Conditions: 150 mM KOAc, 10 mM MgCl2 and 150 mM bicine (pH 8.5), 24 C. Structure probing data (2A3) for a 207-nucleotide construct. 2A3 adducts were read by reverse transcription with SuperScript II with manganese. For 2A3, 972 sequencing reads were counted. The data come from the RNA Mapping Database (RMDB), library VIROID.
RNA sequence: GGGAACGACUCGAGUAGAGUCGAAAAGAUGUUACGGACAAAUUCCGUAACCGUGUGAGGCCAACAUCAAAGAUGCGUACCUAGCUGCGUUUCAACCUGCGUGGGUUGAGGCGGCUUAGCGGAUUAGGGCGUUCUGCCCCAGUGGUACCAUUACCCUCACGUACAAGCAGUUCGCUGCUUGUACGUGAAAAGAAACAACAACAACAAC
Reactivity to 2A3 in 0.01 (KOAc 150mM, MgCl2 10mM, bicine 150mM(pH8.5), 24C), signal-to-noise 2, nucleotides 027 to 156: g050a140u140g000u000u000a000c000g040g000a080c150a120a180a080u280u010c000c010g020u020a000a030c000c030g080u100g030u040g120a100g030g020c030c040a050a070c030a090u200c080a060a060a040g040a010u030g010c060g020u010a050c000c000u020a040g000c010u080g030c050g010u050u050u000c040a000a020c030c010u200g140c050g300u300g010g000g000u000u000g010a000g000g010c010g010g000c030u050u050a010g000c020g000g060a040u120u150a030g000g000g000c070g170u300u090c060u240g020c000c010c010c030a030g070u010g110g000u000a040c060c000a000u020u070a020c000c000c010u010